[RMDB]
RNA sequence: GGGAACGACUCGAGUAGAGUCGAAAAAGCGUAGCGGUACGCCGCUACGCAAGGCGCAUUUGAACUGUAUUGUACGCCUUGCAUAAAGCAAAAGUACUAAAGAAACGUGCCGUUACGACGGCACGAAAAAACAUCCAUUGGUUCGCCAAUGGAUGAAUCACCUUGAGACGUUCGCGUCUCAAGGUGAAAAAGAAACAACAACAACAAC
Reactivity to 2A3 in 0.01 (KOAc 150mM, MgCl2 10mM, bicine 150mM(pH8.5), 24C), signal-to-noise 1, nucleotides 027 to 156: a000g070c030g000u000a000g010c000g000g000u020a010c130g010c070c010g030c040u000a000c000g010c000a000a020g000g000c000g010c050a080u080u040u210g240a210a110c020u040g040u180a190u170u080g070u070a000c000g000c000c000u000u010g000c040a010u090a280a140a030g000c030a000a000a050a060g130u070a040c070u150a050a040a040g130a050a120a000c000g000u000g000c010c000g000u000u060a040c300g030a000c020g030g000c000a070c010g010a000a000a000a000a000a000c010a000u000c000c000a000u000u010g000g020u040u010c020g000c130c000a000a000u000g000g020a000u000g000a000a000